[RMDB]
Chemical mapping of a 177-nucleotide RNA with 2A3 and DMS. For DMS the reverse transcriptase was MarathonRT. The reactions ran in a buffer of 150 mM KOAc, 10 mM MgCl2 and 150 mM bicine (pH 8.5), at 24 C. It was measured as part of the RMDB library M2PK50. In probing experiments dimethyl sulfate is read out at A N1 and C N3, which are open when not base-paired.
RNA sequence: GGGAACGACUCGAGUAGAGUCGAAAAUUUACGGUAUUCGUACCGUAAACGAGCAAGCAAGCAGGGCAACGAGACAAGACGAUAAUAAGAUCGAGCAUGCUGAUAGUAGGAUCUUCGGAUCCUACAAGUAAACUACCGUUUUCGAACGGUAGUUUACAAAAGAAACAACAACAACAAC
Reactivity to 2A3 in 0.01 (KOAc 150mM, MgCl2 10mM, bicine 150mM(pH8.5), 24C), signal-to-noise 6, nucleotides 027 to 126: u020u000u000a010c000g000g010u020a010u010u080c160g040u030a030c000c000g000u010a000a010a000c030g020a040g060c040a090a000g010c010a030a020g000c000a030g030g120g000c020a120a040c060g030a010g010a090c040a080a020g090a050c050g030a030u060a150a070u120a180a090g100a120u050c040g010a010g030c020a040u080g030c030u060g030a070u090a090g000u000a000g000g000a000u010c010u020u050c250g070g000a000u000c000c000u000a000c000a000a000
Reactivity to DMS in 0.01 (KOAc 150mM, MgCl2 10mM, bicine 150mM(pH8.5), 24C), signal-to-noise 6, nucleotides 027 to 126: u000u000u000a000c000g020g020u000a010u000u020c200g030u000a010c000c000g010u000a000a000a040c110g010a110g010c100a060a100g010c080a090a070g020c040a050g010g010g010c050a050a050c100g000a080g000a070c080a040a080g010a080c070g010a060u000a070a060u010a100a090g020a060u000c030g010a130g020c040a070u000g010c040u010g010a100u000a100g020u000a000g000g000a010u000c000u000u010c190g030g010a020u000c000c000u000a000c010a020a090